[RMDB]
RNA sequence: GGGAACGACUCGAGUAGAGUCGAAAAGGACUGCGCAGACCGGCAACAUCAGCAGAGAGCCCGCUAUACGUGACGGAUUGGCUGAAGCGUACAGAAAUAUUGAGCCUCCUGCAAGAGGCAGCCAAGCAAAACGUACGUGAGUUCGCUCACGUACGAAGUGAAACAUGAUGUUCGCAUCAUGUUUCACAAAAGAAACAACAACAACAAC
Reactivity to DMS in 0.01 (KOAc 150mM, MgCl2 10mM, bicine 150mM(pH8.5), 24C), signal-to-noise 1, nucleotides 027 to 156: g050g030a160c030u000g010c050g040c060a090g020a040c040c020g000g000c040a060a040c090a040u000c040a150g040c050a060g030a190g000a110g080c020c000c020g000c010u000a060u000a040c040g030u000g000a300c050g000g000a240u000u010g010g000c000u000g020a080a300g040c040g020u000a140c010a020g010a060a090a150u010a130u000u010g000a180g010c010c000u000c090c020u000g030c090a090a050g000a120g030g020c020a080g040c050c020a030a180g020c040a130a010a120a130c010g010u000a000c010g030u000g010a040g000u010u000c300g050c040u000c000a000c000g020u000a000c020g000a010a040
Reactivity to 2A3 in 0.01 (KOAc 150mM, MgCl2 10mM, bicine 150mM(pH8.5), 24C), signal-to-noise 4, nucleotides 027 to 156: g050g040a030c040u050g000c040g010c060a020g050a130c010c040g060g050c010a030a030c010a100u120c040a020g010c050a000g060a010g000a020g070c000c000c000g000c010u040a040u010a090c070g040u040g050a020c020g050g040a090u030u030g010g020c020u020g010a060a010g030c000g010u020a020c020a030g110a090a170a020u270a090u130u170g020a030g010c010c000u010c000c030u090g070c040a090a030g020a000g040g000c000a000g000c000c000a030a010g030c050a070a070a010a030c010g000u000a000c000g000u000g000a000g000u050u130c240g030c090u000c010a000c000g000u000a000c000g000a030a000

Structure probing data (DMS and 2A3) for a 207-nucleotide construct. For 2A3, 3,133 sequencing reads were counted. The DMS profile rests on 1,849 reads. For DMS the reverse transcriptase was MarathonRT.